[RMDB]
RNA sequence: GGGAACGACUCGAGUAGAGUCGAAAAAUCAGAGGGCGCUAUCAUGCAAACUAGGAUUGUCUGCUCAUGCACAGAACCAACUACCGAUAACUAACAGUGCAUGAAGGUUAGUCAUUCCAUAUUAAUUAAAACUCGUAAUUCUUCGGAAUUACGAGAAUCACCGUACUAACUUCGGUUAGUACGGUGAAAAAGAAACAACAACAACAAC
Reactivity to DMS in 0.01 (KOAc 150mM, MgCl2 10mM, bicine 150mM(pH8.5), 24C), signal-to-noise 2, nucleotides 027 to 156: a100u020c050a040g010a120g020g020g030c150g030c110u000a060u000c030a110u020g000c030a110a120a080c070u010a040g010g020a130u010u000g030u000c020u010g020c070u020c060a030u000g050c050a080c010a000g040a070a230c030c020a100a120c050u010a300c070c020g020a160u000a060a080c010u000a030a130c100a130g000u010g000c010a050u020g000a060a150g000g050u020u000a010g010u000c000a110u000u000c060c060a090u000a070u000u000a030a180u020u010a040a040a070a140c010u000c000g010u000a020a030u000u000c000u000u020c270g040g020a010a000u010u000a010c000g010a000g000a030a020
Reactivity to 2A3 in 0.01 (KOAc 150mM, MgCl2 10mM, bicine 150mM(pH8.5), 24C), signal-to-noise 4, nucleotides 027 to 156: a010u080c040a030g050a060g030g030g000c050g010c010u090a110u260c130a090u240g000c010a030a020a070c040u070a050g030g000a020u030u010g000u020c010u010g020c000u010c020a010u010g000c010a010c010a010g100a120a070c030c020a090a040c070u120a090c040c050g130a110u070a170a060c070u030a050a040c040a110g000u010g000c000a000u000g020a050a030g030g000u090u100a020g000u010c010a010u030u000c000c000a010u080a050u210u220a100a080u090u150a030a100a040a050c000u000c000g000u000a000a000u000u000c000u000u050c150g060g000a010a000u010u000a000c000g000a000g000a000a000